The data come from the RNA Mapping Database (RMDB), library M2RFPK. The record gives the reactivity of an RNA of 207 nucleotides to 2A3. 2A3 adducts were read by reverse transcription with SuperScript II with manganese. The reactions ran in a buffer of 150 mM KOAc, 10 mM MgCl2 and 150 mM bicine (pH 8.5), at 24 C.

RNA sequence: GGGAACGACUCGAGUAGAGUCGAAAAGAUGUUCGCUGAUUCGUCAGCCGCAUGCCCAGGUGGUCGCGAUCUUCAAGGCUACGGCGCGGAUAGGUCCGCGCUGAUCGUUUUCCUCCAACGACGCUAUAAAAGGAACGAAGGUUCGCCUUCGUUCCAACCUCAAUGCUAGCUUCGGCUAGCAUUGAGGAAAAGAAACAACAACAACAAC
Reactivity to 2A3 in 0.01 (KOAc 150mM, MgCl2 10mM, bicine 150mM(pH8.5), 24C), signal-to-noise 1, nucleotides 027 to 156: g050a010u060g010u000u110c070g000c000u000g000a000u000u080c200g050u010c160a000g000c010c010g000c000a000u000g060c020c000c010a000g030g010u000g030g000u040c030g000c060g120a070u020c000u030u030c010a020a020g020g000c000u010a020c010g020g000c000g020c000g010g000a060u050a260g220g190u060c010c000g000c000g030c000u000g000a000u000c000g000u110u020u060u030c010c020u040c010c030a090a010c090g030a040c030g020c080u090a040u300a190a090a100a000g030g010a000a000c010g000a000a020g000g000u070u090c220g100c000c010u020u000c000g000u000u000c000c000a000a000